Conditions: 150 mM KOAc, 10 mM MgCl2 and 150 mM bicine (pH 8.5), 24 C. Chemical mapping of a 207-nucleotide RNA with 2A3 and DMS. Source: RMDB library OK3TST, as collected in RNAgym.

RNA sequence: GGGAACGACUCGAGUAGAGUCGAAAAGUAUAGCGAAGUUAGAGGCGACGAGCUAUACGAUGAAUCAGCCUCCAUUGAUAUCGGUAUACAGAUCCGCGGCGAUCAGAUACCGUAAUUAGUAGCCGCAAUCCGGAGUGGAGACGCACGACGGUCGUCAAGGCGUAUAUAUCUUCGGAUAUAUACGCCUAAAAGAAACAACAACAACAAC
Reactivity to 2A3 in 0.01 (KOAc 150mM, MgCl2 10mM, bicine 150mM(pH8.5), 24C), signal-to-noise 1, nucleotides 027 to 156: g000u000a020u010a010g000c010g110a160a020g030u020u000a000g030a000g060g000c030g010a000c040g000a000g050c000u000a020u000a000c020g000a060u120g120a010a120u190c080a030g010c000c020u000c030c010a300u100u130g060a040u110a090u160c020g000g000u000a010u010a080c140a050g030a000u040c000c120g020c010g020g000c040g000a000u060c010a010g010a040u000a030c000c000g000u030a120a020u090u180a030g080u030a010g000c010c030g000c020a000a000u020c010c030g000g010a030g000u010g040g020a140g040a070c010g030c060a030c000g040a000c030g010g030u070c010g080u040c090a080
Reactivity to DMS in 0.01 (KOAc 150mM, MgCl2 10mM, bicine 150mM(pH8.5), 24C), signal-to-noise 1, nucleotides 027 to 156: g000u000a050u000a030g000c020g000a130a170g020u010u000a060g010a140g010g040c000g000a110c000g000a300g010c000u000a030u000a040c000g000a150u000g010a110a080u040c050a240g010c020c030u000c020c030a060u000u020g000a150u030a000u000c000g080g000u000a010u000a170c180a300g010a070u010c060c020g040c020g060g070c070g040a000u020c010a270g000a070u000a030c010c000g050u000a050a070u000u000a130g040u000a130g030c000c000g020c010a170a130u010c010c000g020g000a190g020u000g000g020a170g020a170c050g020c110a120c020g020a100c070g000g000u000c110g070u000c020a130
The DMS profile rests on 1,265 reads.